[RMDB]
RNA sequence: GGGAACGACUCGAGUAGAGUCGAAAAGUCCUCGCACGAUGAAGGCUGCGAGCGCGACUGGUCGGUGGCCACCAAGGCGUUGGCCGGCAGCGACGGCCAGGUCGAGAAGCUGGUCGGCGUGCGCGUAUCGUGCCGAAAAUUUCGAUUUUCGGCACGAAAAAGAAACAACAACAACAAC
Reactivity to DMS in 0.01 (KOAc 150mM, MgCl2 10mM, bicine 150mM(pH8.5), 24C), signal-to-noise 3, nucleotides 027 to 126: g000u010c020c010u010c010g020c020a020c030g010a080u010g020a150a180g010g020c000u000g000c090g000a130g010c070g000c020g010a130c030u010g000g000u000c020g020g020u020g010g000c030c020a080c060c030a110a110g050g030c170g040u000u010g000g020c020c050g010g010c050a090g010c080g000a130c000g010g000c000c000a010g000g000u000c000g000a100g000a100a210g010c010u000g030g030u000c010g000g020c010g020u000g010c010g000c170g010u000a120
Reactivity to 2A3 in 0.01 (KOAc 150mM, MgCl2 10mM, bicine 150mM(pH8.5), 24C), signal-to-noise 2, nucleotides 027 to 126: g050u020c000c000u000c000g000c010a010c020g050a030u210g130a130a080g050g000c030u050g010c020g140a030g020c050g000c010g020a060c020u030g000g000u020c030g120g070u080g060g010c010c000a030c020c040a090a100g220g000c120g070u100u050g030g000c040c010g030g020c000a060g070c050g140a060c000g020g000c000c000a000g060g160u050c010g000a010g000a090a010g010c020u060g050g000u020c000g040g010c010g000u010g000c020g000c000g000u000a060